[RMDB]
RNA sequence: GGGAACGACUCGAGUAGAGUCGAAAAGCUCAAUAAAAACUUUUGAUAUUAGUUUUUAUGGGUAUUUACACUCUGGUGAGGGGAGCUGAGUACGGAAGCUCCAUUAAUCAGCCCCCAACCUUGGAUUCGUAGUUCUGUAAUUCGUUACAGAACUACGAAAAGAAACAACAACAACAAC
Reactivity to 2A3 in 0.01 (KOAc 150mM, MgCl2 10mM, bicine 150mM(pH8.5), 24C), signal-to-noise 2, nucleotides 027 to 126: g010c000u010c040a140a190u010a000a000a000a010a010c010u190u080u070u090g080a040u080a180u300u190a030g000u010u010u000u020u000a000u000g000g000g000u070a120u040u110u060a060c100a000c010u060c060u050g050g000u020g060a250g030g000g000g000a060g060c000u010g000a000g070u080a050c090g050g030a150a040g060c060u010c080c020a000u010u060a040a020u020c000a010g000c000c010c010c000c000a000a000c020c000u030u090g090g010a030u030u030
Source information: This 177-nucleotide RNA was probed chemically with 2A3. 2A3 adducts were read by reverse transcription with SuperScript II with manganese. High 2A3 reactivity points to a flexible backbone, as in loops and unpaired stretches. Reactivities are given for positions 27 through 126. The 2A3 profile rests on 1,104 reads.